RNA sequence: GGGAACGACUCGAGUAGAGUCGAAAACCGUAGGAAUCUGACAGGAGGUAUGGCUAAGACAGUGGUCUUCGAAAGAGGACCAUCGAGCCAUACUCCCCACCCUGCAAUGGAUUCCUAAACGGAAAUCCUAAAAAGAUGUUCGCAUCUUUUUAGGAAAUCAUCAAAGUAACUUCGGUUACUUUGAUGAAAAAGAAACAACAACAACAAC
Reactivity to 2A3 in 0.01 (KOAc 150mM, MgCl2 10mM, bicine 150mM(pH8.5), 24C), signal-to-noise 4, nucleotides 027 to 156: c000c000g000u010a010g000g010a000a010u010c030u090g190a130c010a010g000g010a010g020g010u000a000u000g000g000c020u080a150a040g050a060c060a050g030u010g010g010u000c000u010u010c010g040a060a030a010g000a010g000g000a000c010c010a000u010c000g000a010g000c010c000a000u000a000c000u020c000c010c000c000a030c000c000c010u010g000c020a030a110u130g010g000a000u000u000c010c000u030a100a090a010c020g020g020a050a080a070u050c000c000u000a010a000a000a000a010g020a000u020g010u100u150c270g030c130a000u000c000u040u000u000u000u010a000g000g000a000a000a020
Reactivity to DMS in 0.01 (KOAc 150mM, MgCl2 10mM, bicine 150mM(pH8.5), 24C), signal-to-noise 3, nucleotides 027 to 156: c010c010g020u020a070g000g020a040a000u000c000u000g010a210c020a030g010g000a240g000g000u000a010u000g000g000c010u000a130a140g020a160c300a080g040u000g010g030u010c000u010u000c000g030a180a140a290g000a060g010g010a010c000c000a000u000c030g000a040g030c020c000a020u000a010c010u000c020c000c000c010a160c200c010c010u000g000c040a110a150u000g010g010a050u000u010c000c000u000a020a040a070c020g020g000a060a100a120u000c000c000u000a000a000a000a000a020g000a020u000g020u000u020c300g020c020a010u000c000u000u000u000u000u000a020g000g000a020a030a050
This 207-nucleotide RNA was probed chemically with 2A3 and DMS. For DMS the reverse transcriptase was MarathonRT. Conditions: 150 mM KOAc, 10 mM MgCl2 and 150 mM bicine (pH 8.5), 24 C.